[RMDB]
An RNA of 177 nucleotides, treated with 2A3 and DMS and read out base by base.
RNA sequence: GGGAACGACUCGAGUAGAGUCGAAAAGCAGUACGGUUCGCCGUACUGCAAAGGCACAUGCAAAACCGGUGGGAAACCAUAAACGGAAAGCCAAGCAUGAAUAAACAGGGACCUUCGGGUCCCUGAACUCUACUAAUGGGUUCGCCCAUUAGUAGAGAAAAGAAACAACAACAACAAC
Reactivity to 2A3 in 0.01 (KOAc 150mM, MgCl2 10mM, bicine 150mM(pH8.5), 24C), signal-to-noise 3, nucleotides 027 to 126: g000c000a000g010u010a000c000g030g030u000u110c180g030c090c000g000u010a000c010u010g000c000a030a000a000g010g000c040a030c000a130u020g000c000a010a030a030a150c000c010g000g020u020g020g000g020a060a020a030c000c000a020u080a040a260a020c010g000g020a110a020a000g020c010c030a030a000g010c010a020u040g040a120a070u180a090a090a020c020a000g000g000g010a000c000c000u070u140c250g100g020g000u000c000c000c000u000g000a000a000
Reactivity to DMS in 0.01 (KOAc 150mM, MgCl2 10mM, bicine 150mM(pH8.5), 24C), signal-to-noise 4, nucleotides 027 to 126: g010c000a000g000u000a010c010g010g000u010u020c240g030c000c000g010u010a010c000u000g010c000a000a030a050g000g010c080a200c040a010u000g000c000a060a070a170a120c010c000g010g010u000g000g000g000a160a090a170c010c000a020u000a050a080a270c040g000g010a100a040a080g020c020c030a090a200g000c010a000u000g020a210a070u030a080a110a250c020a000g020g000g000a030c010c000u000u000c190g020g010g000u000c000c000c000u000g000a000a090
As a SHAPE reagent, 2A3 marks flexible, mostly unpaired nucleotides at the ribose 2'-OH. For 2A3 the reverse transcriptase was SuperScript II with manganese. It was measured as part of the RMDB library M2PK50. The RNA was probed in 150 mM KOAc, 10 mM MgCl2 and 150 mM bicine (pH 8.5) at 24 C.